[RMDB]
RNA sequence: GGGAACGACUCGAGUAGAGUCGAAAAGCGUCCUGGUUCGCCAGGACGCAAAUAAAUGGUAGACUGAGACCGUCUAACUCAGAUAACCAGAAAUACACGGAAAAACUGACUUGUUCGCAAGUCAGAAGUAAUGUAAAGCCUUCGGGCUUUACAUUACAAAAGAAACAACAACAACAAC
Reactivity to DMS in 0.01 (KOAc 150mM, MgCl2 10mM, bicine 150mM(pH8.5), 24C), signal-to-noise 2, nucleotides 027 to 126: g010c000g000u000c000c000u010g000g020u000u000c200g010c000c020a030g000g010a020c000g000c000a020a010a010u000a060a140a100u000g000g010u000a040g030a090c000u000g000a010g000a140c120c140g010u010c130u000a080a120c000u000c010a000g020a060u000a080a020c000c000a050g000a050a090a110u020a070c170a090c120g010g010a080a100a080a130a180c020u010g000a020c010u000u000g000u020u010c210g000c020a000a020g010u000c000a020g000a040a080
Reactivity to 2A3 in 0.01 (KOAc 150mM, MgCl2 10mM, bicine 150mM(pH8.5), 24C), signal-to-noise 2, nucleotides 027 to 126: g000c020g000u010c000c000u010g000g060u020u050c170g050c100c020a000g000g000a000c000g050c000a000a000a000u020a010a050a020u050g000g000u000a040g050a220c010u000g010a000g010a080c060c030g180u080c100u100a160a090c010u010c000a010g000a050u220a020a020c000c000a000g050a010a110a010u200a050c110a030c110g080g010a080a060a030a020a050c010u000g010a000c010u010u030g000u070u090c190g010c070a000a000g000u020c000a000g000a000a000
This 177-nucleotide RNA was probed chemically with DMS and 2A3. For DMS the reverse transcriptase was MarathonRT. The 2A3 profile rests on 1,705 reads. For DMS, 1,588 sequencing reads were counted. Reactivities are given for positions 27 through 126. Conditions: 150 mM KOAc, 10 mM MgCl2 and 150 mM bicine (pH 8.5), 24 C. For 2A3 the reverse transcriptase was SuperScript II with manganese.